[RMDB]
RNA sequence: GGGAACGACUCGAGUAGAGUCGAAAACGCACUCGCAGCUUAGUAACCUGCGCUGAGCCCUUCUCCCCCAGCUUGCCUGUGUCCUAGGGAAUUGGAAGGUCAUCCUUCACAGGAUCGUGUGGAAGUCAUUACUCGUGAGUGUUCGCACUCACGAGAAGAUAGAAAGGUACUUCGGUACCUUUCUAUCAAAAGAAACAACAACAACAAC
Reactivity to DMS in 0.01 (KOAc 150mM, MgCl2 10mM, bicine 150mM(pH8.5), 24C), signal-to-noise 2, nucleotides 027 to 156: c070g010c020a120c030u000c020g020c040a050g010c040u000u010a230g000u010a120a120c160c010u000g010c030g010c110u000g010a080g000c010c010c050u000u000c050u010c040c000c000c000c040a090g020c030u000u020g030c030c000u000g010u010g010u000c050c030u000a090g000g010g000a100a130u010u010g030g020a050a030g040g000u000c060a100u000c020c010u000u000c040a120c050a070g030g010a080u000c060g010u000g000u000g000g010a080a230g000u000c050a080u010u000a200c020u000c010g050u010g020a000g000u000g020u000u000c300g020c020a030c020u000c010a010c000g010a000g000a000a050
Reactivity to 2A3 in 0.01 (KOAc 150mM, MgCl2 10mM, bicine 150mM(pH8.5), 24C), signal-to-noise 3, nucleotides 027 to 156: c020g000c000a060c040u060c020g010c010a000g020c010u030u050a020g000u040a090a030c010c000u020g000c010g040c180u070g020a030g010c010c010c010u110u050c120u130c000c000c000c000c000a010g010c020u040u060g020c000c000u030g010u010g010u080c010c020u020a030g040g030g020a050a090u170u060g030g040a020a020g060g010u080c020a020u050c000c010u040u040c000a020c010a040g010g010a060u080c080g020u040g020u030g080g050a040a030g030u050c030a070u030u210a090c000u000c000g000u000g000a000g000u010g010u010u040c080g010c050a000c000u000c000a000c000g000a000g000a020a000
This 207-nucleotide RNA was probed chemically with DMS and 2A3. For 2A3, 2,401 sequencing reads were counted. The data come from the RNA Mapping Database (RMDB), library M2RFPK. 2A3 is a SHAPE reagent: it acylates the 2'-hydroxyl of flexible nucleotides of all four kinds. In probing experiments dimethyl sulfate is read out at A N1 and C N3, which are open when not base-paired.